[RMDB]
Chemical mapping of a 177-nucleotide RNA with 2A3 and DMS.
It was measured as part of the RMDB library M2PK50.
RNA sequence: GGGAACGACUCGAGUAGAGUCGAAAAGUGCACGACUUCGGUCGUGCACAAAUAAAGGCAGUCGAGUGCGUACGGCACAGUCAUACGCUGACGCCACGACUAAAAGUAACGUCUUCGGACGUUACAACGUAAGUAGCAGGUUCGCCUGCUACUUACGAAAAGAAACAACAACAACAAC
Reactivity to 2A3 in 0.01 (KOAc 150mM, MgCl2 10mM, bicine 150mM(pH8.5), 24C), signal-to-noise 4, nucleotides 027 to 126: g000u000g020c010a000c000g020a000c040u050u100c250g030g000u000c010g010u010g010c000a000c000a000a000a000u030a010a000a000g160g030c050a010g010u000c010g080a040g080u200g050c010g010u060a240c030g030g010c010a030c040a120g140u130c040a050u070a200c110g000c010u010g010a010c010g000c000c020a020c040g010a010c020u050a060a070a050a000g000u010a000a000c000g000u000c000u030u070c190g070g000a000c000g000u000u000a000c000a010a010
Reactivity to DMS in 0.01 (KOAc 150mM, MgCl2 10mM, bicine 150mM(pH8.5), 24C), signal-to-noise 4, nucleotides 027 to 126: g020u000g000c000a000c000g010a010c010u000u010c180g050g030u010c000g000u010g000c000a000c010a000a030a050u010a050a140a120g000g010c120a020g010u000c020g000a120g020u000g010c000g010u010a050c030g030g020c010a130c150a090g010u020c220a140u010a100c120g000c000u000g000a050c020g010c020c040a270c040g000a040c030u010a030a070a070a120g000u000a000a000c000g010u000c000u000u030c180g020g000a000c000g010u000u010a000c000a080a090
Notes
Values are in units of 0.01, from 0 to 300, in steps of 10. Reactivities are given for positions 27 through 126. Conditions: 150 mM KOAc, 10 mM MgCl2 and 150 mM bicine (pH 8.5), 24 C.